[RMDB]
The data come from the RNA Mapping Database (RMDB), library OK3TST. The record gives the reactivity of an RNA of 207 nucleotides to 2A3. Values cover nucleotides 27 to 156. The RNA was probed in 150 mM KOAc, 10 mM MgCl2 and 150 mM bicine (pH 8.5) at 24 C.
RNA sequence: GGGAACGACUCGAGUAGAGUCGAAAAACUUUGGGAGACCGAGACGGGCAGAUCACCUGAGGUCGGGCAUUCGAGACCAGCCUGACCAAUAUGGAGAAACCCCAUUUGUACUAAAAAUACAAAAUUAGCGGGGCGUGGUGGCGCAUGCCUGUAAUCCCGUGAAAUAACGGUUCGCCGUUAUUUCACGAAAAGAAACAACAACAACAAC
Reactivity to 2A3 in 0.01 (KOAc 150mM, MgCl2 10mM, bicine 150mM(pH8.5), 24C), signal-to-noise 1, nucleotides 027 to 156: a020c040u110u120u140g010g010g000a050g010a040c010c000g020a010g010a140c010g000g000g000c030a000g010a180u050c010a010c020c000u020g010a010g040g030u000c060g000g040g000c110a130u120u110c190g110a040g130a190c110c030a000g000c010c000u010g000a000c000c000a000a000u160a050u070g060g000a040g020a220a020a010c000c050c030c000a050u000u000u040g000u000a000c020u050a010a110a190a010a000u010a020c010a010a000a050a170u170u160a190g090c110g040g000g010g000c010g050u080g000g020u010g010g010c020g000c110a100u160g010c000c050u010g000u000a000a020u050c040c000